[RMDB]
RNA sequence: GGGAACGACUCGAGUAGAGUCGAAAAGUUUGAGGCAAUCGGAAAAGACCCGCUCCAAGCCAUUGAAUCGGGUCAAAUCCGAGUAACUGAGGCUCAGUACAAGCAAGUCAAAGCGCUUGUUGAUACCGGCGAUCAGCAGUCCGCUGUAAAUGAGCUGUAGUGUUUGUAAAUUCGUUUACAAACACUAAAAAGAAACAACAACAACAAC
Reactivity to DMS in 0.01 (KOAc 150mM, MgCl2 10mM, bicine 150mM(pH8.5), 24C), signal-to-noise 6, nucleotides 027 to 156: g010u000u000u000g010a180g010g020c030a110a160u000c020g010g000a060a060a180a300g000a040c000c000c020g010c250u000c010c010a040a080g010c160c230a140u000u000g010a040a050u000c010g020g020g020u000c050a010a080a250u000c000c000g010a060g010u000a070a050c020u000g000a130g020g010c030u000c020a060g010u000a040c060a080a080g010c010a030a050g020u000c050a090a140a220g030c130g010c000u000u010g010u010u010g010a240u000a010c020c020g000g010c020g000a000u000c030a120g000c060a110g020u000c040c030g020c010u000g010u010a000a060a110u000g000a100g020c010u000g020
Reactivity to 2A3 in 0.01 (KOAc 150mM, MgCl2 10mM, bicine 150mM(pH8.5), 24C), signal-to-noise 4, nucleotides 027 to 156: g040u040u080u100g060a050g010g050c030a060a080u010c010g000g010a040a080a030a010g000a010c010c010c010g000c030u030c030c030a090a100g090c060c140a150u030u060g020a040a020u050c000g010g010g000u000c000a040a100a000u000c000c000g010a000g000u010a010a000c020u020g050a020g010g030c010u000c020a000g000u030a010c010a040a030g020c010a050a020g040u060c060a220a140a110g090c110g000c050u020u020g010u030u010g020a050u030a070c010c040g020g000c010g030a030u060c040a010g080c010a000g110u070c040c050g000c030u030g020u050a000a090a110u050g010a010g020c020u020g070